RNA sequence: GGGAACGACUCGAGUAGAGUCGAAAAGACGGGGCAGGUCAUCGUCACAAUAGACGACGUUCAUACGGGCGACAAGACCGCCGCAGAAGUGUUCGGGCGCUACGGCAUCCCCAUCGGGUUGGCGGCAAACGCGAAGUUUCUCGACCAGUCGAGUAGCGUCAACAGGAAAAUUCGUUUUCCUGUUGACAAAAGAAACAACAACAACAAC
Reactivity to 2A3 in 0.01 (KOAc 150mM, MgCl2 10mM, bicine 150mM(pH8.5), 24C), signal-to-noise 3, nucleotides 027 to 156: g070a020c070g020g000g030g060c090a150g030g030u010c020a040u010c000g000u020c000a040c050a210a250u160a150g030a010c060g030a050c050g080u030u020c040a050u050a210c060g000g010g010c000g020a040c040a160a000g010a020c000c000g000c000c010g000c020a050g050a170a020g040u050g030u130u090c050g060g030g000c020g000c040u070a050c040g030g000c030a030u050c000c000c010c020a090u080c060g010g010g010u040u050g040g030c000g000g020c050a100a050a040c040g030c060g070a110a010g010u010u060u000c070u010c000g120a170c050c020a020g020u030c010g010a010g020u040a010g060c030
Reactivity to DMS in 0.01 (KOAc 150mM, MgCl2 10mM, bicine 150mM(pH8.5), 24C), signal-to-noise 2, nucleotides 027 to 156: g010a080c070g020g050g000g030c090a090g050g030u000c020a100u010c020g000u000c010a070c050a180a280u000a300g010a050c030g020a040c010g010u020u000c020a150u000a070c080g020g010g000c000g000a130c060a140a160g000a170c000c000g020c000c000g020c040a030g030a080a110g010u000g010u020u000c040g030g010g030c000g010c050u000a070c000g020g010c040a100u000c000c010c010c020a080u000c110g040g040g030u000u000g000g000c020g030g010c030a040a040a090c040g000c060g000a070a210g020u000u010u000c010u010c000g010a100c080c030a130g020u010c030g010a140g020u000a060g000c080

An RNA of 207 nucleotides, treated with 2A3 and DMS and read out base by base. For 2A3 the reverse transcriptase was SuperScript II with manganese. In probing experiments dimethyl sulfate is read out at A N1 and C N3, which are open when not base-paired. The RNA was probed in 150 mM KOAc, 10 mM MgCl2 and 150 mM bicine (pH 8.5) at 24 C. DMS adducts were read by reverse transcription with MarathonRT. The data come from the RNA Mapping Database (RMDB), library OK3TST.